The record gives the reactivity of an RNA of 207 nucleotides to 2A3. 2A3 adducts were read by reverse transcription with SuperScript II with manganese. Reactivities are rounded to 0.1 and cut off at 0 and 3. Source: RMDB library RNAMAK, as collected in RNAgym.
RNA sequence: GGGAACGACUCGAGUAGAGUCGAAAAAUGGACGCUGGGCACGCUCCCCACCUUAUUGAUGACCGACGAUCAUACUGAAGCGCGCACGGUAUGGGAGGUCAGAGAUAAGAGGCGUGCCUGUGCUGAAGCGCGCACGGCAACCGAAAGGUGCGAAGAAGGAUAUCACAUGGUUCGCCAUGUGAUAUCCAAAAGAAACAACAACAACAAC
Reactivity to 2A3 in 0.01 (KOAc 150mM, MgCl2 10mM, bicine 150mM(pH8.5), 24C), signal-to-noise 2, nucleotides 027 to 156: a000u120g100g070a060c070g000c080u020g000g010g040c010a000c010g010c000u130c040c010c000c000a000c000c000u030u030a030u000u030g020a040u020g010a020c000c000g100a190c000g010a100u000c000a020u000a000c000u030g080a170a040g000c000g000c000g000c000a020c030g000g000u020a000u000g010g000g030a000g000g010u010c000a000g000a000g000a000u000a000a000g000a010g000g010c010g020u000g000c000c000u000g010u010g000c010u010g020a170a020g000c020g000c000g000c000a000c000g040g000c010a040a040c000c000g070a110a010a040g060g000u060g000c030g140a080a060g100a100a090